[RMDB]
RNA sequence: GGGAACGACUCGAGUAGAGUCGAAAACAUAAACGCUUCGGCGUUUAUGAAAUAAAAUCAGCGGUAAGCUCGCGAAAAAUAUUACCGCUGAACGCGAGCUUAAAACGGGACAGUUCGCUGUCCCGAAGUAACCAUCUAACUUCGGUUAGAUGGUUACAAAAGAAACAACAACAACAAC
Reactivity to DMS in 0.01 (KOAc 150mM, MgCl2 10mM, bicine 150mM(pH8.5), 24C), signal-to-noise 2, nucleotides 027 to 126: c000a000u010a000a030a040c000g020c000u010u010c300g010g020c010g020u000u030u000a010u000g000a060a100a060u020a080a080a110a130u000c040a040g010c030g030g020u000a010a020g000c030u000c040g040c030g000a030a080a090a100a050u010a050u010u010a050c000c020g000c030u000g000a040a040c110g010c020g000a020g020c050u000u000a030a080a080a160c020g000g030g000a010c000a010g010u000u010c130g010c000u000g000u000c000c000c000g000a000a040
Reactivity to 2A3 in 0.01 (KOAc 150mM, MgCl2 10mM, bicine 150mM(pH8.5), 24C), signal-to-noise 2, nucleotides 027 to 126: c010a020u000a010a020a000c000g000c000u000u080c260g110g000c020g000u000u000u000a000u000g000a000a040a020u170a000a060a010a080u100c040a010g040c020g090g060u060a020a010g020c020u010c010g050c040g110a070a060a000a160a020u150a100u080u100a040c020c020g000c040u030g000a000a010c000g030c000g020a010g000c000u030u070a080a090a020a020c000g000g020g000a000c000a010g020u030u060c130g070c110u000g000u000c000c000c000g000a000a000